[RMDB]
RNA sequence: GGGAACGACUCGAGUAGAGUCGAAAAGAAGCUGCAGUUAGAGCAACUGCCAGUGACAUAUGUGGUGAGUUCAAGAUCAACGAACACCACACCAAUGCAUUGGUGUAUGCCGCAGCAUACCUUGCCAUGACACCAGACCAGAGGUCUAUCGACAGCGGAGGUUGGAAGUGUUCGCACUUCCAACCUCAAAAGAAACAACAACAACAAC
Reactivity to 2A3 in 0.01 (KOAc 150mM, MgCl2 10mM, bicine 150mM(pH8.5), 24C), signal-to-noise 2, nucleotides 027 to 156: g080a100a060g000c030u030g000c030a180g050u300u270a100g050a030g060c000a000a010c030u120g050c000c000a000g000u000g000a090c000a010u090a000u060g010u010g040g000u060g100a260g050u100u060c070a080a070g070a300u180c040a050a130c110g010a050a030c020a020c000c000a000c020a000c000c050a040a000u010g020c020a000u020u010g020g020u130g030u050a100u060g010c000c030g000c020a000g000c000a000u090a020c010c000u000u040g050c030c030a120u140g010a080c020a030c060c020a030g040a030c010c010a080g070a100g090g050u000c010u070a070u040c040g040a060c050a050g020c050g100
This 207-nucleotide RNA was probed chemically with 2A3.
For 2A3, 995 sequencing reads were counted.